[RMDB]
Structure probing data (DMS and 2A3) for a 177-nucleotide construct. The RNA was probed in 150 mM KOAc, 10 mM MgCl2 and 150 mM bicine (pH 8.5) at 24 C. Reactivities are given for positions 27 through 126. As a SHAPE reagent, 2A3 marks flexible, mostly unpaired nucleotides at the ribose 2'-OH. It was measured as part of the RMDB library OK2TRN. DMS adducts were read by reverse transcription with MarathonRT.
RNA sequence: GGGAACGACUCGAGUAGAGUCGAAAAGUUUAACGAUAAUCAUGGGCUUCUGUCGAGUCCUGACGGAAAUUUUGAUUUUGAUAAUGUGGAACGCGCGCGCUGGUUGUCCACAAGGGCAGAAAUAAAACAGUGCAUACGGAUUCGUCCGUAUGCACUGAAAAGAAACAACAACAACAAC
Reactivity to DMS in 0.01 (KOAc 150mM, MgCl2 10mM, bicine 150mM(pH8.5), 24C), signal-to-noise 2, nucleotides 027 to 126: g000u010u010u010a070a080c080g010a140u000a080a170u000c020a030u020g000g010g000c050u010u010c020u010g020u000c050g030a120g000u030c070c050u000g000a040c060g010g000a040a080a090u000u010u000u020g010a040u000u010u000u000g010a180u000a050a060u000g010u000g010g000a070a100c070g010c040g000c050g020c020g050c040u000g000g010u020u000g040u010c030c020a030c160a040a050g030g020g010c020a080g000a110a110a070u000a040a080a070a120
Reactivity to 2A3 in 0.01 (KOAc 150mM, MgCl2 10mM, bicine 150mM(pH8.5), 24C), signal-to-noise 1, nucleotides 027 to 126: g050u100u100u210a120a010c030g000a070u080a080a030u230c000a030u090g000g000g000c020u020u030c020u060g040u010c060g020a000g030u020c040c000u000g040a000c050g000g230a030a000a080u220u200u130u180g110a160u000u020u110u170g100a080u060a140a060u090g020u060g060g000a050a030c000g020c030g090c000g070c010g000c020u040g140g000u100u070g020u080c000c000a030c000a070a120g060g000g000c060a050g180a100a120a080u190a000a100a020a040